[RMDB]
RNA sequence: GGGAACGACUCGAGUAGAGUCGAAAAGAAGGGUGAAAGCCCUUGAUACUGUAGUGGAAAUUAUAAAUAAGAAGAGUUCUGAGUUGCUUAAGCAGAACUAAAAUAAAAAGACAAGCACUAUUACAAACAUGGCGAGGUAAGUUCGCUUACCUCGCAACGUUUUAUUACGGUUCGCCGUAAUAAAACGAAAAGAAACAACAACAACAAC
Reactivity to DMS in 0.01 (KOAc 150mM, MgCl2 10mM, bicine 150mM(pH8.5), 24C), signal-to-noise 1, nucleotides 027 to 156: g000a010a010g000g110g040u000g020a080a160a240g000c020c000c000u010u000g010a160u010a060c080u020g020u020a060g010u000g000g010a060a100a120u000u020a000u010a090a010a140u050a030a090g010a110a130g010a120g000u000u000c020u010g000a080g010u020u010g020c010u000u020a080a140g050c030a040g000a060a070c030u000a020a010a060a150u010a030a120a110a090a150g000a160c030a040a140g030c040a050c070u000a030u000u020a090c130a060a030a060c020a070u020g000g000c010g020a020g030g020u010a020a030g010u010u000c300g020c000u000u000a000c000c010u000c010g040c010a000a000
Reactivity to 2A3 in 0.01 (KOAc 150mM, MgCl2 10mM, bicine 150mM(pH8.5), 24C), signal-to-noise 4, nucleotides 027 to 156: g060a000a000g010g010g000u020g030a050a050a020g000c020c000c000u010u000g020a010u040a080c060u070g050u140a050g020u070g050g050a070a020a060u170u110a140u180a220a130a050u210a080a070g080a040a030g040a020g040u010u000c000u010g020a010g040u070u040g050c000u070u030a090a030g000c000a000g000a000a010c090u080a020a040a000a010u090a000a050a000a000a000g030a020c030a010a010g010c020a010c040u100a090u220u160a050c120a100a150a010c050a130u140g140g000c010g000a000g000g000u010a000a000g000u020u070c170g010c080u000u000a010c000c000u000c010g000c000a000a000